[RMDB]
RNA sequence: GGGAACGACUCGAGUAGAGUCGAAAAUUCGCUGUCUUCUGCGUGCGAGGAGCCCGCGACUGCAGAUGCGGGGCAGCGAGCUGUGAGUCGCGCAAUGCUGCUGGCUGUUCAAGACAUCACGCGAGGGGGACCAUCCGGAGUUCGCUCCGGAUGGUCCAAAAGAAACAACAACAACAAC
Reactivity to 2A3 in 0.01 (KOAc 150mM, MgCl2 10mM, bicine 150mM(pH8.5), 24C), signal-to-noise 1, nucleotides 027 to 126: u030u000c020g000c040u010g030u010c020u050u050c050u070g030c000g010u050g050c020g050a030g020g010a010g000c050c060c000g040c010g010a100c060u060g060c050a030g050a150u040g250c000g030g000g010g000c000a000g000c010g070a070g010c040u000g010u030g110a030g050u010c000g000c000g020c000a110a000u210g050c010u010g000c000u030g050g000c030u000g040u110u000c020a000a070g020a060c070a130u020c010a030c020g000c020g000a110g110g030g000
Notes
Structure probing data (2A3) for a 177-nucleotide construct. Conditions: 150 mM KOAc, 10 mM MgCl2 and 150 mM bicine (pH 8.5), 24 C. For 2A3 the reverse transcriptase was SuperScript II with manganese.